The record gives the reactivity of an RNA of 177 nucleotides to DMS and 2A3.
[RMDB]
RNA sequence: GGGAACGACUCGAGUAGAGUCGAAAAGUCGACUGGUCAGAGGCUUUCUGUACAAGGUCAGACAGUAUCCCACCCGGCCCACUAGUGAAACUGGUUCAAUCCCAGUAUCGCGCACCACGAUUGACCUAAUACCGCCAGGAUUCGUCCUGGCGGUAUUAAAAGAAACAACAACAACAAC
Reactivity to DMS in 0.01 (KOAc 150mM, MgCl2 10mM, bicine 150mM(pH8.5), 24C), signal-to-noise 1, nucleotides 027 to 126: g000u050c000g020a000c020u000g020g010u010c000a050g030a080g000g030c180u080u000u020c050u000g000u030a030c110a020a080g100g030u000c030a140g020a000c000a030g030u060a080u040c000c000c000a060c080c000c040g000g030c040c000c020a020c050u000a060g000u000g000a060a220a030c000u000g050g000u030u000c210a090a070u140c300c000c060a020g010u030a060u030c040g000c100g000c040a050c020c030a000c000g010a070u050u030g000a050c050c000u000
Reactivity to 2A3 in 0.01 (KOAc 150mM, MgCl2 10mM, bicine 150mM(pH8.5), 24C), signal-to-noise 3, nucleotides 027 to 126: g010u010c010g000a020c010u050g000g030u040c000a010g020a050g130g100c080u070u180u010c000u000g030u030a040c030a080a150g110g060u040c030a030g000a020c000a010g020u070a130u020c000c020c010a030c010c050c000g020g030c020c010c020a020c020u070a010g020u030g100a020a050a080c000u010g000g040u110u090c070a010a070u040c000c000c010a020g040u020a090u020c010g000c000g000c000a030c030c000a050c030g070a050u080u040g020a030c000c000u030
About this RNA
Conditions: 150 mM KOAc, 10 mM MgCl2 and 150 mM bicine (pH 8.5), 24 C. The data come from the RNA Mapping Database (RMDB), library RFM100.